The record gives the reactivity of an RNA of 177 nucleotides to DMS and 2A3. DMS adducts were read by reverse transcription with MarathonRT. For DMS, 785 sequencing reads were counted. The 2A3 profile rests on 1,973 reads. For 2A3 the reverse transcriptase was SuperScript II with manganese.

RNA sequence: GGGAACGACUCGAGUAGAGUCGAAAAGAUAUGGAGGAGGUCGUAAGUGCUUGGAUUUAGACUCGGAAACGAGUCUUGUCAGCAUAUCGACUCCUCCUAAGUCAAAGGGUUCGGUUCGCCGAACCCACCAAACCAUCGAGUUCGCUCGAUGGUUUGGAAAAGAAACAACAACAACAAC
Reactivity to DMS in 0.01 (KOAc 150mM, MgCl2 10mM, bicine 150mM(pH8.5), 24C), signal-to-noise 1, nucleotides 027 to 126: g000a030u000a300u010g000g000a010g010g020a010g050g000u000c010g000u000a070a300g010u000g000c000u000u020g000g020a050u020u010u010a020g010a000c000u010c020g000g000a220a100a260c020g000a020g000u000c000u020u010g000u040c000a050g020c000a000u000a300u000c010g000a050c000u000c000c000u000c000c000u000a010a090g010u000c020a130a150a090g000g000g020u000u000c010g030g000u000u000c300g010c010c000g040a010a070c010c000c010a050
Reactivity to 2A3 in 0.01 (KOAc 150mM, MgCl2 10mM, bicine 150mM(pH8.5), 24C), signal-to-noise 2, nucleotides 027 to 126: g060a020u080a080u210g000g000a020g000g000a080g120g300u080c050g000u070a300a300g030u010g000c040u200u300g220g030a060u300u300u050a030g000a000c020u000c000g000g000a000a090a040c020g000a000g010u000c030u010u020g010u000c010a000g000c000a000u010a100u130c000g000a000c000u030c000c010u000c000c000u010a020a000g050u010c030a030a200a080g020g000g000u000u040c000g010g040u050u100c290g050c080c000g000a000a000c000c000c000a000